An RNA of 207 nucleotides, treated with 2A3 and DMS and read out base by base.
Conditions: 150 mM KOAc, 10 mM MgCl2 and 150 mM bicine (pH 8.5), 24 C.
For DMS, 1,491 sequencing reads were counted.
RNA sequence: GGGAACGACUCGAGUAGAGUCGAAAAUACAGGGUGACAACCCCGUACUGAAGACCAGUACGCUGUGCGGUAGUGCCAGAGUAGCGGGGGUUGGAUAUCCCUCGCGAAUAACGCAGGCAUCGACUGCGAAGGCUAAACACAACCUGAGACCGAUAGUGAUGUAUACGUUCUUCGGAACGUAUACAUCAAAAGAAACAACAACAACAAC
Reactivity to 2A3 in 0.01 (KOAc 150mM, MgCl2 10mM, bicine 150mM(pH8.5), 24C), signal-to-noise 4, nucleotides 027 to 156: u220a020c030a000g010g020g020u030g070a040c030a040a110c030c000c010c000g000u000a000c000u020g060a230a080g080a170c110c000a000g000u010a000c010g000c080u050g060u170g090c040g010g020u070a040g050u050g060c000c030a020g000a000g110u030a020g010c000g030g000g010g000g000u000u110g080g040a030u070a060u210c000c000c010u000c000g000c000g020a020a030u080a040a030c060g000c060a050g020g000c050a070u070c090g110a040c000u000g000c030g030a120a040g020g000c050u090a030a100a000c050a000c010a050a140c000c000u010g010a000g040a040c000c040g050a050u100a090g160u110
Reactivity to DMS in 0.01 (KOAc 150mM, MgCl2 10mM, bicine 150mM(pH8.5), 24C), signal-to-noise 1, nucleotides 027 to 156: u000a190c030a000g000g050g010u030g070a140c170a100a160c010c000c020c000g000u000a030c000u100g010a160a140g000a120c130c000a090g030u000a000c000g000c020u000g030u060g000c040g000g000u000a160g020u020g020c090c010a160g020a100g000u010a230g000c000g020g010g010g010g030u000u000g080g000a210u020a160u000c010c010c000u010c020g000c010g000a110a110u000a050a100c040g050c020a030g020g000c030a100u020c020g000a010c030u000g030c020g020a120a070g020g020c000u000a170a110a130c080a060c020a020a060c070c000u000g020a170g000a030c000c000g000a290u000a130g020u000